[RMDB]
RNA sequence: GGGAACGACUCGAGUAGAGUCGAAAAGGCCAGCACGACGUUGUACAGCGCAUCUCUGACUGGUUCAGGAAGCGUCAUCGGUUGUCCGGCGUUGCCACACACGGAAACUUCAGGCGCGCCAAGCACCCCCGAUCCCUCGAUUCGUCGAGGGAUCGGGAAAAGAAACAACAACAACAAC
Reactivity to 2A3 in 0.01 (KOAc 150mM, MgCl2 10mM, bicine 150mM(pH8.5), 24C), signal-to-noise 1, nucleotides 027 to 126: g010g100c000c000a000g170c000a000c090g000a000c000g000u050u120g180u170a030c000a050g000c110g080c040a130u000c100u170c010u030g010a040c000u070g000g150u150u000c000a000g000g000a080a080g030c010g000u000c000a010u050c040g000g050u100u220g150u150c050c000g000g000c000g060u090u090g170c000c020a230c000a000c000a000c100g180g000a300a160a000c110u270u270c060a100g000g140c000g000c000g060c090c000a000a050g000c000a110c060c000